[RMDB]
RNA sequence: GGGAACGACUCGAGUAGAGUCGAAAAGAUAUGGAAUGCUAGCUAGCGAAGACAUCGGAAACGAUGUCUAUCGCUUGGACCUAGACAUUCCUAAGUCAAAAUCUAGUUUCGUUCGCGAAACUAGAAACAUCCUUGAGAUGUUCGCAUCUCAAGGAUGAAAAGAAACAACAACAACAAC
Reactivity to DMS in 0.01 (KOAc 150mM, MgCl2 10mM, bicine 150mM(pH8.5), 24C), signal-to-noise 4, nucleotides 027 to 126: g000a000u000a020u010g000g000a000a000u000g000c010u000a010g010c000u010a000g040c000g030a030a020g000a020c000a010u000c000g030g010a010a010a010c000g010a010u000g010u000c000u000a010u000c000g030c010u000u000g000g000a010c300c000u000a000g000a110c000a000u000u000c000c000u000a000a120g000u000c000a050a090a180a190u000c010u000a000g020u000u000u000c000g010u010u030c300g050c050g010a010a010a000c000u010a010g000a030a120a280
Reactivity to 2A3 in 0.01 (KOAc 150mM, MgCl2 10mM, bicine 150mM(pH8.5), 24C), signal-to-noise 1, nucleotides 027 to 126: g000a010u020a010u040g000g000a010a000u010g000c000u000a000g000c010u010a010g010c000g000a020a000g000a000c000a000u000c020g020g000a000a010a000c010g000a000u000g000u000c000u000a050u010c000g000c000u050u300g020g010a010c000c000u000a020g070a170c000a000u000u020c000c000u000a020a010g000u000c010a050a010a020a300u020c010u000a000g000u000u010u010c030g010u040u050c300g000c000g080a000a000a000c000u010a000g000a010a010a000